Structure probing data (DMS and 2A3) for a 207-nucleotide construct. Conditions: 150 mM KOAc, 10 mM MgCl2 and 150 mM bicine (pH 8.5), 24 C.
[RMDB]
RNA sequence: GGGAACGACUCGAGUAGAGUCGAAAAUCAGAAGGAUUCCAGAUUGAAGGAAUGAUCUGCUGAGUAGUAGAAAAACACAAGUGAUGAACAGAAAACACAUUGCAUUGUUUUAUCCGUUCUAAGAAGUGUCUUUCUUUUAGGGAGAAGAAGUGGGUGAGACUUAAAUACAAUUCGUUGUAUUUAAGUCAAAAGAAACAACAACAACAAC
Reactivity to DMS in 0.01 (KOAc 150mM, MgCl2 10mM, bicine 150mM(pH8.5), 24C), signal-to-noise 5, nucleotides 027 to 156: u000c020a080g010a070a100g020g000a080u000u000c010c010a240g020a170u010u000g010a170a140g010g010a050a040u010g000a050u010c030u000g010c030u010g010a090g020u000a100g020u000a070g000a030a030a020a050a030c030a030c030a070a190g030u000g020a180u000g010a030a060c020a050g010a050a040a030a040c040a030c130a200u000u010g040c160a220u010u000g000u000u000u010u000a160u000c000c010g010u000u000c010u000a120a110g020a120a170g020u000g000u000c030u010u000u000c000u000u000u000u000a100g020g010g010a120g000a060a070g000a040a070g010u010g010g020g010u000g000a180
Reactivity to 2A3 in 0.01 (KOAc 150mM, MgCl2 10mM, bicine 150mM(pH8.5), 24C), signal-to-noise 9, nucleotides 027 to 156: u070c010a010g060a080a030g060g010a040u040u030c020c010a030g110a210u120u180g070a110a060g030g030a040a040u060g030a060u040c020u050g020c040u040g030a010g040u070a010g010u040a010g060a030a040a000a020a000c040a010c030a170a140g050u030g080a100u070g010a040a000c020a040g030a030a040a010a000c050a010c010a070u060u270g040c050a060u050u050g060u030u020u020u020a050u010c020c030g000u010u000c010u030a060a060g090a130a020g070u010g010u010c020u020u050u010c000u020u100u030u090a030g010g010g010a050g010a050a020g020a030a010g030u110g020g010g010u030g010a060
Reactivities are given for positions 27 through 156. It was measured as part of the RMDB library OK3TST.